Overview: An RNA of 177 nucleotides, treated with 2A3 and DMS and read out base by base. Values are in units of 0.01, from 0 to 300, in steps of 10. Values cover nucleotides 27 to 126. As a SHAPE reagent, 2A3 marks flexible, mostly unpaired nucleotides at the ribose 2'-OH.

RNA sequence: GGGAACGACUCGAGUAGAGUCGAAAAAGCCGGUGACAUACGUGCUUGUCCGUCGUCCACAGCAUCCAGGACGCCCACCGGUACAGCACGGAGACGUAUGCCAGGAGCUCGUUGAGCCGCAGUGCGGAGGCAUUUGCAAUUUCGAUUGCAAAUGCCUAAAAGAAACAACAACAACAAC
Reactivity to 2A3 in 0.01 (KOAc 150mM, MgCl2 10mM, bicine 150mM(pH8.5), 24C), signal-to-noise 3, nucleotides 027 to 126: a000g040c030c020g040g010u090g030a030c060a100u160a050c090g030u070g010c010u080u110g010u010c010c020g060u080c010g000u030c000c010a070c000a050g100c060a040u110c070c030a080g000g000a010c020g000c040c000c010a140c030c020g000g000u100a010c050a000g000c010a010c030g020g020a070g000a020c060g060u080a040u120g010c010c000a070g010g020a040g000c030u050c090g140u060u130g040a010g000c000c000g010c060a050g060u040g110c030g000g070
Reactivity to DMS in 0.01 (KOAc 150mM, MgCl2 10mM, bicine 150mM(pH8.5), 24C), signal-to-noise 2, nucleotides 027 to 126: a050g010c010c020g010g000u000g000a100c120a050u050a080c020g000u010g020c000u000u030g010u020c000c010g010u020c050g050u020c000c000a090c170a110g060c110a020u010c020c060a170g020g000a020c040g000c300c030c010a100c150c060g000g040u000a020c080a100g000c040a010c000g000g010a100g000a070c060g040u000a040u060g050c010c000a020g000g000a090g000c000u000c050g010u030u000g010a160g010c040c000g020c050a060g010u000g000c020g010g000
Annotation:
For DMS, 2,379 sequencing reads were counted. Conditions: 150 mM KOAc, 10 mM MgCl2 and 150 mM bicine (pH 8.5), 24 C. It was measured as part of the RMDB library OK1LIB.